[RMDB]
Chemical mapping of a 207-nucleotide RNA with 2A3 and DMS. The reactions ran in a buffer of 150 mM KOAc, 10 mM MgCl2 and 150 mM bicine (pH 8.5), at 24 C.
RNA sequence: GGGAACGACUCGAGUAGAGUCGAAAACUAGUUUCUAGAAACUGCUCCUCUCCCAUUUAGCUAGGGAUGAUAACAGUGAAACUGUUACUAGCCCUGGGCUACUGUCCACACUAUUGUAUAUAGUCCCAGUUCUUUGGCAUUUCCAGAUAAUCACACACGAUUUAGUAUGCUUCGGCAUACUAAAUCGAAAAGAAACAACAACAACAAC
Reactivity to 2A3 in 0.01 (KOAc 150mM, MgCl2 10mM, bicine 150mM(pH8.5), 24C), signal-to-noise 4, nucleotides 027 to 156: c030u020a040g010u010u070u050c050u070a020g110a100a130a040c030u050g020c070u010c000c010u040c020u000c020c010c010a040u070u090u150a030g000c050u060a040g020g010g010a030u080g040a100u030a060a010c000a010g010u030g210a120a120a180c000u000g010u020u020a030c020u010a030g080c000c000c020u020g010g010g010c010u010a030c040u050g050u010c050c010a020c010a010c060u060a120u180u120g040u050a060u020a010u030a200g060u080c000c020c010a020g030u080u010c030u030u070u060g040g000c030a070u030u020u090c010c000a020g040a140u150a130a090u200c080a060c030a020c050a020
Reactivity to DMS in 0.01 (KOAc 150mM, MgCl2 10mM, bicine 150mM(pH8.5), 24C), signal-to-noise 1, nucleotides 027 to 156: c040u000a070g000u010u010u000c050u020a160g010a060a130a090c040u010g010c020u020c040c040u000c060u000c000c030c010a270u010u010u000a080g040c010u020a080g000g030g020a040u000g010a010u000a000a020c010a020g040u020g040a140a090a300c010u000g030u000u010a030c010u010a040g010c030c000c010u010g010g050g000c030u010a020c070u010g000u000c040c050a040c060a030c030u000a080u000u020g010u010a130u000a040u010a020g010u000c000c020c030a150g020u000u010c030u000u000u000g030g070c040a190u010u010u010c010c020a070g020a180u000a060a220u000c040a020c030a050c090a200
The 2A3 profile rests on 2,013 reads. The data come from the RNA Mapping Database (RMDB), library OK3TST.